[RMDB]
RNA sequence: GGGAACGACUCGAGUAGAGUCGAAAAAUUGGGACGCAGGCGCGGAGCCCAGGGACCACUCCCCCUGCACAGACAUGAGACCAUAGGGGACCUGUCUGGGUGGCCUCAGGGAUAGGCGCUCCCCAAGGAUUCUAGACUAGUUCGCUAGUCUAGAAUCAAAAGAAACAACAACAACAAC
Reactivity to DMS in 0.01 (KOAc 150mM, MgCl2 10mM, bicine 150mM(pH8.5), 24C), signal-to-noise 2, nucleotides 027 to 126: a090u000u000g000g000g010a120c170g040c220a100g020g010c020g000c020g010g000a180g020c020c000c000a060g000g000g000a080c000c000a070c030u000c030c050c010c000c040u020g000c100a130c030a000g000a030c020a030u020g000a120g040a240c020c010a190u010a140g010g000g000g010a150c110c000u000g000u000c000u000g000g010g020u010g020g000c010c000u000c000a070g030g000g010a070u010a170g010g020c030g010c010u000c250c000c000c030a020a070g000
Reactivity to 2A3 in 0.01 (KOAc 150mM, MgCl2 10mM, bicine 150mM(pH8.5), 24C), signal-to-noise 1, nucleotides 027 to 126: a000u040u010g010g020g010a040c100g060c170a070g090g000c010g000c040g080g070a040g010c040c020c000a010g030g020g000a140c010c000a020c060u100c010c010c000c000c020u080g030c100a050c040a010g060a010c020a050u240g010a060g040a130c020c060a060u230a220g000g080g010g060a040c000c020u030g090u000c040u050g030g000g000u020g000g000c000c000u000c020a060g000g000g010a020u110a070g160g010c000g000c020u040c010c000c000c000a000a020g030